[RMDB]
RNA sequence: GGGAACGACUCGAGUAGAGUCGAAAACAGGCGGGUGCUGAGACUGAUACGCCGCUACCUGAAAGCGGAAAUGGUUAAAGACGGGCAAAGGGAGAAACGGCAGGCGGGCAUGCCGCAGGGCGGCCCGCAUCUUCGUAUCCUUCGGGAUACGAAGAUGAAAAGAAACAACAACAACAAC
Reactivity to DMS in 0.01 (KOAc 150mM, MgCl2 10mM, bicine 150mM(pH8.5), 24C), signal-to-noise 6, nucleotides 027 to 126: c080a100g000g010c080g000g010g020u010g010c040u000g010a210g000a070c050u000g010a100u000a090c210g000c010c010g000c020u000a080c130c110u010g020a070a110a060g010c020g020g000a060a060a080u010g010g010u010u010a060a140a080g010a120c100g000g000g000c070a050a090a090g000g000g010a110g000a060a050a100c110g010g000c070a060g010g010c010g010g010g010c020a050u010g050c000c020g000c280a100g000g020g020c030g000g010c010c010c010g020
Reactivity to 2A3 in 0.01 (KOAc 150mM, MgCl2 10mM, bicine 150mM(pH8.5), 24C), signal-to-noise 3, nucleotides 027 to 126: c030a000g060g020c030g030g050g010u090g070c020u030g020a030g040a090c030u070g040a060u040a180c080g000c010c000g000c010u060a130c010c060u140g170a240a080a000g020c020g000g000a050a070a070u110g000g030u050u070a090a100a030g050a030c040g040g000g000c080a090a090a090g060g000g000a070g030a040a120a010c030g050g000c010a010g070g020c010g020g000g000c030a050u110g010c000c020g010c040a010g110g010g000c000g000g010c000c030c020g010
The record gives the reactivity of an RNA of 177 nucleotides to DMS and 2A3. The RNA was probed in 150 mM KOAc, 10 mM MgCl2 and 150 mM bicine (pH 8.5) at 24 C. For 2A3, 6,655 sequencing reads were counted. For 2A3 the reverse transcriptase was SuperScript II with manganese.